[RMDB]
RNA sequence: GGGAACGACUCGAGUAGAGUCGAAAAGGAAGACGACGGGCUUCUGGAAGAAGUGUCCGGUCUGGUCGAAUGGCCGGUCGUGCUGAUGGGCGAAUUCGAGGAAGAAUUUCUGGCCAUCCCGCCGGAAGUGGAUAUCGUAUUUCGAUACGAUAUCCACAAAAGAAACAACAACAACAAC
Reactivity to 2A3 in 0.01 (KOAc 150mM, MgCl2 10mM, bicine 150mM(pH8.5), 24C), signal-to-noise 3, nucleotides 027 to 126: g020g030a030a020g010a020c130g010a010c010g010g030g010c020u020u020c090u200g120g100a190a110g000a010a010g050u030g050u070c000c000g010g010u000c010u010g000g110u070c030g040a110a080u100g060g010c000c030g030g030u140c090g040u150g060c120u110g010a030u040g070g020g050c000g010a020a020u010u030c020g010a060g160g110a150a090g030a090a090u040u120u060c050u110g030g050c000c010a050u010c010c000c000g020c010c000g030g000a060a050
Reactivity to DMS in 0.01 (KOAc 150mM, MgCl2 10mM, bicine 150mM(pH8.5), 24C), signal-to-noise 3, nucleotides 027 to 126: g010g000a140a030g000a020c010g020a300c030g030g000g010c020u000u010c000u010g010g020a170a110g000a020a020g030u000g000u010c010c000g000g010u000c010u000g020g000u010c050g000a070a070u000g010g000c000c000g010g020u010c030g020u010g040c200u000g000a030u000g000g000g000c010g010a040a050u010u000c010g000a100g010g010a150a130g010a050a050u000u000u010c040u000g020g000c020c040a070u000c010c010c020g000c010c000g000g010a050a070
Conditions: 150 mM KOAc, 10 mM MgCl2 and 150 mM bicine (pH 8.5), 24 C.
The record gives the reactivity of an RNA of 177 nucleotides to 2A3 and DMS.
For DMS the reverse transcriptase was MarathonRT.
It was measured as part of the RMDB library OK2TST.
Values cover nucleotides 27 to 126.